Chemical mapping of a 207-nucleotide RNA with 2A3.
The 2A3 profile rests on 1,260 reads.
High 2A3 reactivity points to a flexible backbone, as in loops and unpaired stretches.
RNA sequence: GGGAACGACUCGAGUAGAGUCGAAAACCUCACUACAUUUUACUGUUCCUAAAGAAUUUGUGACAGGUACAGUAAAACGUAUUGCAAGGUUUAUCAGUUCCUAUAAACAGGUAAAUAACAAAAUAUGAAAAGCAAAGACUGUUCGCAGUCUUUGCAACGUCUAAUUCGUGUUCGCACGAAUUAGACGAAAAGAAACAACAACAACAAC
Reactivity to 2A3 in 0.01 (KOAc 150mM, MgCl2 10mM, bicine 150mM(pH8.5), 24C), signal-to-noise 3, nucleotides 027 to 156: c000c000u010c010a020c020u010a010c010a030u000u000u000u000a010c000u000g000u040u040c010c000u050a120a160a070g150a140a200u180u290u300g120u090g070a050c080a110g000g000u000a010c000a000g020u000a000a000a000a000c010g000u010a000u000u020g040c090a090a070g010g020u000u000u010a140u150c010a020g000u000u010c000c000u040a100u170a120a090a010c050a010g090g080u120a070a090a130u230a120a060c080a090a100a070a010u190a060u140g100a100a060a010a000g000c000a030a000a000g000a000c000u020g020u070u070c130g010c070a000g000u000c000u010u000u010g010c000a000a000